[RMDB]
RNA sequence: GGGAACGACUCGAGUAGAGUCGAAAAGCUCUUCGGUCGCCGCGGAUCACUGGCGUCCAGCGGAGAAACAGGAGCUCGUCUCCUUCCUUUCGCUGCUGGCUCCACAUCCGGUCGUCGCUGAAGACUCCUUCCUUUCGCUGCUGGCUCCACAUCCGAUUCAAAUAGAGCAGUUCGCUGCUCUAUUUGAAAAAGAAACAACAACAACAAC
Reactivity to 2A3 in 0.01 (KOAc 150mM, MgCl2 10mM, bicine 150mM(pH8.5), 24C), signal-to-noise 2, nucleotides 027 to 156: g030c050u020c000u010u000c010g010g050u300c040g040c020c020g190c010g030g010a000u000c010a000c070u000g020g000c030g140u140c010c010a000g010c010g040g020a070g000a030a040a050c300a070g010g010a010g000c040u130c210g230u160c030u010c010c000u000u030c000c000u000u000u000c010g000c040u010g010c000u010g000g000c010u000c000c010a060c020a020u000c000c020g010g110u100c010g000u000c000g000c020u030g010a020a000g010a000c010u040c000c000u020u080c010c000u090u100u090c100g040c040u100g000c020u030g020g040c000u070c030c050a060c020a170u040c050c030g040a040u020